[RMDB]
RNA sequence: GGGAACGACUCGAGUAGAGUCGAAAAGAUGGAAGAAGUCAGGAAACUUGGGACACCGCUGCUGAGGUCCUUGCAGCCCCACGGUCCCCAGGCUGGUGACUGGUGGGGGAGUAUGGAGUCCAGCUGACAAAACCUUUGAGUUCGCUCAAAGGUUUUGAAAAGAAACAACAACAACAAC
Reactivity to DMS in 0.01 (KOAc 150mM, MgCl2 10mM, bicine 150mM(pH8.5), 24C), signal-to-noise 3, nucleotides 027 to 126: g000a070u000g000g020a070a060g010a080a070g010u000c050a060g000g010a070a070a070c070u000u000g010g000g010a110c140a060c070c060g020c100u000g000c020u010g000a050g010g010u010c020c030u000u010g010c040a070g000c010c000c000c010a030c020g000g000u000c010c070c010c020a120g020g030c210u000g030g010u010g010a030c010u010g030g030u010g000g000g000g000g000a040g020u000a070u000g000g000a080g020u000c020c010a060g020c030u010g000a190
Chemical mapping of a 177-nucleotide RNA with DMS. The DMS profile rests on 3,466 reads. The RNA was probed in 150 mM KOAc, 10 mM MgCl2 and 150 mM bicine (pH 8.5) at 24 C. Reactivities are rounded to 0.1 and cut off at 0 and 3.